Description: The record gives the reactivity of an RNA of 207 nucleotides to DMS. Conditions: 150 mM KOAc, 10 mM MgCl2 and 150 mM bicine (pH 8.5), 24 C. The data come from the RNA Mapping Database (RMDB), library OK3TST. Values cover nucleotides 27 to 156.

RNA sequence: GGGAACGACUCGAGUAGAGUCGAAAACUGCCCAAGAAGUUGUCUAGGCAGCAAAAGCAUCUACUUAAAAGCUAAAGUGGCUUGAUGAGGCAUACUCCUGGGACAAGAAGAUCAAAUGUAGGGCUAGAUGGAUUUGUUACUCCUCUGCCUUCCUGUAUAAAAUCACCUGGUUCGCCAGGUGAUUUUAAAAAGAAACAACAACAACAAC
Reactivity to DMS in 0.01 (KOAc 150mM, MgCl2 10mM, bicine 150mM(pH8.5), 24C), signal-to-noise 1, nucleotides 027 to 156: c030u010g030c000c030c020a020a260g020a010a240g000u000u000g000u010c000u000a080g010g020c030a070g020c030a000a090a090a110g030c050a090u000c010u000a050c100u000u000a040a080a160a100g030c040u000a050a110a200g020u010g010g000c010u000u010g010a120u040g010a150g000g000c040a090u000a080c020u000c010c000u000g000g000g030a040c030a060a090g010a040a070g010a140u000c030a030a130a080u010g030u010a070g030g050g060c080u000a050g020a060u000g010g000a160u010u030u020g000u000u000a170c180u000c000c000u000c000u000g000c010c030u030u000c030c030u070g020u000a180